[RMDB]
RNA sequence: GGGAACGACUCGAGUAGAGUCGAAAAACGCAUUGCACUGUUUGGCCCAUCCGUACGCCGCUUCUCCCCUCUCCUCACGGUUGGGGGCUGGAGUGGUGGGGGGCGUGCGUGAAAUUGCCGCCCUUUGGAGUUAGCAAUUCUUCGGAAUUGCUAACUCAAAAGAAACAACAACAACAAC
Reactivity to DMS in 0.01 (KOAc 150mM, MgCl2 10mM, bicine 150mM(pH8.5), 24C), signal-to-noise 1, nucleotides 027 to 126: a090c030g010c030a090u010u010g000c060a110c140u020g000u000u000u000g000g000c010c000c000a060u020c060c130g030u020a150c030g020c000c010g030c000u000u000c010u000c060c020c000c000u000c000u010c000c000u030c270a070c290g000g000u000u000g030g040g010g000g010c120u010g010g000a010g030u000g000g050u000g000g000g020g000g000g000c030g100u000g020c000g000u020g000a070a110a100u020u010g000c020c060g000c000c000c000u000u000u000g030